[RMDB]
RNA sequence: GGGAACGACUCGAGUAGAGUCGAAAACAUCUUUCCUCCCUACACGGUGACUCCAGCUUGGGAGGGGCAGGGCUAGGCUGAGCCAGCACUCCCUGUGGUGUCUGCCUGCCACGUGCAGCUCUGGAGUAAAACCUGGAGAAGUUCGCUUCUCCAGGAAUCUCAUAUAUACGUUCGCGUAUAUAUGAGAAAAAGAAACAACAACAACAAC
Reactivity to DMS in 0.01 (KOAc 150mM, MgCl2 10mM, bicine 150mM(pH8.5), 24C), signal-to-noise 2, nucleotides 027 to 156: c060a110u000c050u010u000u000c030c020u010c030c000c010u000a110c110a170c230g000g020u000g020a130c040u000c000c000a110g030c120u010u000g010g000g000a060g000g000g030g020c030a050g000g000g010c020u000a060g020g010c000u000g020a300g010c010c060a080g000c030a060c020u000c010c050c020u000g000u000g000g020u000g000u000c040u000g010c050c010u000g000c020c010a090c070g000u010g030c030a090g010c030u000c020u010g020g000a080g030u000a080a060a080a150c000c000u000g000g000a050g020a040a020g010u000u000c300g020c010u000u000c010u000c000c000a010g010g000a010a020
Reactivity to 2A3 in 0.01 (KOAc 150mM, MgCl2 10mM, bicine 150mM(pH8.5), 24C), signal-to-noise 5, nucleotides 027 to 156: c020a050u090c080u080u140u060c010c010u050c010c000c000u080a060c140a040c190g090g040u070g040a020c010u010c010c010a010g010c020u060u040g000g000g000a000g010g000g000g000c000a030g010g020g000c030u300a010g010g040c030u040g040a020g100c020c020a030g030c020a030c060u100c010c020c020u040g030u040g030g020u050g120u030c030u030g010c000c000u020g010c010c010a130c110g150u130g000c010a030g000c030u040c020u090g010g000a000g000u010a010a050a000a020c000c000u000g010g000a010g000a010a000g000u040u130c150g030c110u000u010c000u000c000c000a000g000g000a000a010